[RMDB]
RNA sequence: GGGAACGACUCGAGUAGAGUCGAAAAGGGGAUGAUCGGUUUCGACAGCGGCUGUUGAAGCAGGGGAAGCGUGUCGAGGAAGCGGCAAUGAUCUCGUAAACCAUAUGUCGCAAAAAAUAAUCGCCAAUACCAAGAGCGAUUCCCAGUCCUUCGCCCUCUACUCCCAAAACUUCGGUUUUGGGAGUAGAAAAGAAACAACAACAACAAC
Reactivity to 2A3 in 0.01 (KOAc 150mM, MgCl2 10mM, bicine 150mM(pH8.5), 24C), signal-to-noise 2, nucleotides 027 to 156: g030g000g020g010a020u070g030a040u260c110g040g000u040u080u000c000g040a010c000a090g080c070g160g030c060u100g100u150u180g070a130a040g040c060a020g050g000g000g030a000a010g080c020g010u020g080u040c000g000a010g000g010a100a050g000c000g010g000c000a010a000u010g000a080u000c050u040c160g160u250a030a010a010c030c010a030u060a070u090g000u010c020g000c040a050a030a010a030a030a030u260a020a040u120c010g010c040c030a030a050u120a240c060c030a040a010g010a020g000c010g010a020u000u030c010c010c000a010g010u010c000c000u030u120c060g070c000c010c020u010